Chemical mapping of a 177-nucleotide RNA with 2A3 and DMS. Source: RMDB library OK2TRN, as collected in RNAgym. Values are in units of 0.01, from 0 to 300, in steps of 10.
RNA sequence: GGGAACGACUCGAGUAGAGUCGAAAACGGUGCGGCCGCCUUCACGGAUAGCGAAGCGAAGCUUCUCUUCCAUGGCGAUCGGCACGAUCAGGGUAACGUCCAUGGCGACGUUAUCGCCAGGCAUGAAUGACCCAUAAAAUUUCGAUUUUAUGGGUCAAAAAGAAACAACAACAACAAC
Reactivity to 2A3 in 0.01 (KOAc 150mM, MgCl2 10mM, bicine 150mM(pH8.5), 24C), signal-to-noise 4, nucleotides 027 to 126: c040g040g010u020g000c010g010g000c010c010g040c000c000u160u140c130a080c170g000g000a060u170a080g010c020g000a000a000g010c110g150a200a050g000c010u020u000c010u000c000u020u000c000c010a050u040g010g000c010g000a030u030c030g170g010c030a000c020g010a070u070c040a050g070g020g050u020a040a000c010g010u000c020c040a270u250g170g000c150g010a000c000g000u020u010a010u010c010g010c010c030a060g050g080c080a070u130g030a150a040
Reactivity to DMS in 0.01 (KOAc 150mM, MgCl2 10mM, bicine 150mM(pH8.5), 24C), signal-to-noise 8, nucleotides 027 to 126: c120g010g010u000g020c020g000g000c060c000g010c020c020u000u010c220a110c200g000g000a020u020a010g000c060g010a020a010g010c010g010a170a160g010c000u000u000c000u000c000u000u000c000c000a130u000g000g010c020g000a020u000c010g020g030c010a020c020g000a090u000c150a100g010g000g000u000a010a010c010g010u000c000c010a220u010g010g010c100g010a010c020g000u000u000a010u000c000g000c050c050a100g000g010c170a120u010g000a110a150

Source information:
The DMS profile rests on 17,652 reads. 2A3 adducts were read by reverse transcription with SuperScript II with manganese.